[RMDB]
RNA sequence: GGGAACGACUCGAGUAGAGUCGAAAAGAAUGCAUUCCUGAGCGAAAGGUAUCGGACAUUGGAAGCCAUCGAAGAUAUGAAACCGACUCAGGCAGUUCCAAAAAGGCUUCUUCAAUCCUUCGAGACACCUCCAUUUACCAUUCGUGGUAAAUGGAGGAAAAGAAACAACAACAACAAC
Reactivity to 2A3 in 0.01 (KOAc 150mM, MgCl2 10mM, bicine 150mM(pH8.5), 24C), signal-to-noise 2, nucleotides 027 to 126: g040a050a070u180g070c030a080u000u100c010c000u000g000a000g030c050g070a110a110a030g130g020u020a030u050c030g010g000a020c010a030u010u120g060g040a090a050g030c000c000a000u030c030g000a040a030g010a040u030a030u110g100a080a030a070c040c000g160a180c020u000c040a000g030g010c000a040g030u110u010c040c040a000a050a000a010a080g020g000c000u040u000c000u020u040c050a050a080u050c010c000u080u100c060g070a060g050a010c030a030
Reactivity to DMS in 0.01 (KOAc 150mM, MgCl2 10mM, bicine 150mM(pH8.5), 24C), signal-to-noise 3, nucleotides 027 to 126: g010a040a080u030g010c080a180u000u000c010c020u010g000a090g050c070g000a100a070a050g010g010u030a020u020c020g010g020a120c160a040u010u000g030g010a060a060g030c040c050a120u000c040g070a190a120g010a070u000a080u020g010a090a100a150c300c020g010a110c100u030c050a040g000g030c130a110g000u010u000c020c030a050a050a140a090a170g010g000c000u000u000c000u000u000c110a080a120u000c050c010u010u000c070g000a140g010a100c300a070

Structure probing data (2A3 and DMS) for a 177-nucleotide construct.
Values cover nucleotides 27 to 126.
The reactions ran in a buffer of 150 mM KOAc, 10 mM MgCl2 and 150 mM bicine (pH 8.5), at 24 C.
DMS adducts were read by reverse transcription with MarathonRT.